Conditions: 150 mM KOAc, 10 mM MgCl2 and 150 mM bicine (pH 8.5), 24 C. Structure probing data (DMS and 2A3) for a 207-nucleotide construct. As a SHAPE reagent, 2A3 marks flexible, mostly unpaired nucleotides at the ribose 2'-OH. It was measured as part of the RMDB library OK3TST. For DMS the reverse transcriptase was MarathonRT. For 2A3, 935 sequencing reads were counted.
RNA sequence: GGGAACGACUCGAGUAGAGUCGAAAAAAGUUUUUCAGGUAGACUCUCAAAAUUUAUUCCCAGCAUUUAUGAAGCUAUUUACCAUUAUAAGAGAAUGUGAAGUUCAUUGUCAUACCAAUUACCUUUUGCACUGCUUCCAGGAAUAAAAUGCUGCCUACAUAGACAUGUACUUCGGUACAUGUCUAUGAAAAGAAACAACAACAACAAC
Reactivity to DMS in 0.01 (KOAc 150mM, MgCl2 10mM, bicine 150mM(pH8.5), 24C), signal-to-noise 1, nucleotides 027 to 156: a080a040g010u000u000u000u020u000c080a070g040g000u010a140g010a040c040u000c070u000c010a050a070a090a060u000u000u000a060u000u000c000c000c010a240g020c070a060u000u010u000a040u020g000a070a110g010c040u000a110u000u000u010a100c020c040a080u010u010a080u000a060a080g010a120g010a080a030u010g020u010g000a080a120g010u010u000c130a080u000u000g020u000c040a110u020a120c120c040a010a070u000u010a110c060c010u000u000u000u000g020c080a070c050u000g000c030u000u000c060c050a060g000g010a100a100u000a040a030a070a110u000g020c030u010g010c000c010u000a180
Reactivity to 2A3 in 0.01 (KOAc 150mM, MgCl2 10mM, bicine 150mM(pH8.5), 24C), signal-to-noise 2, nucleotides 027 to 156: a000a000g080u080u050u000u020u060c020a010g010g000u030a040g060a100c030u060c020u030c160a050a040a120a100u120u140u080a040u030u010c030c000c000a010g010c010a050u080u180u150a040u150g030a050a010g000c000u020a050u170u200u070a110c060c000a040u100u150a070u120a170a150g020a000g040a060a030u090g010u030g050a050a040g020u010u030c030a060u040u090g060u050c010a060u040a200c070c020a010a010u020u010a010c030c000u060u060u080u110g030c040a060c090u070g000c000u050u030c040c010a040g000g060a090a020u090a020a080a040a030u050g000c010u020g010c010c000u020a030